[RMDB]
RNA sequence: GGGAACGACUCGAGUAGAGUCGAAAAUGACGUCGUUUCGACGACGUCAACAUAAAAUCAGCGGUAAAUAAUUAGGAGGCGUUACCGCUGAACGCCACCAUACGAGAGGGCUAUUCGUAGCCCUCAAGCUUAAUGGUGGAUUCGUCCACCAUUAAGCAAAAGAAACAACAACAACAAC
Reactivity to DMS in 0.01 (KOAc 150mM, MgCl2 10mM, bicine 150mM(pH8.5), 24C), signal-to-noise 4, nucleotides 027 to 126: u000g010a010c000g010u000c000g030u000u000u020c160g020a020c000g000a000c000g010u000c000a030a070c150a080u010a060a050a100a130u010c010a010g010c010g010g010u010a020a040a040u010a050a090u010u010a170g010g010a050g000g000c060g010u000u000a080c020c010g000c000u000g000a010a030c040g010c000c020a090c030c020a130u000a110c230g000a170g010a010g010g000g020c010u000a030u010u010c200g000u000a010g010c000c000c010u000c000a010a060
Reactivity to 2A3 in 0.01 (KOAc 150mM, MgCl2 10mM, bicine 150mM(pH8.5), 24C), signal-to-noise 6, nucleotides 027 to 126: u070g000a000c000g000u000c000g000u020u040u100c200g080a020c000g020a000c000g000u000c000a000a010c010a020u190a020a090a010a110u030c000a000g020c000g090g100u100a040a080a080u120a090a150u180u210a130g080g030a040g010g040c030g010u010u020a090c010c000g000c000u000g000a000a000c000g040c010c000a040c020c020a040u080a200c090g030a050g000a000g210g000g010c000u020a020u040u080c170g060u010a000g000c000c000c000u000c000a000a000
Structure probing data (DMS and 2A3) for a 177-nucleotide construct. For DMS the reverse transcriptase was MarathonRT. For 2A3 the reverse transcriptase was SuperScript II with manganese.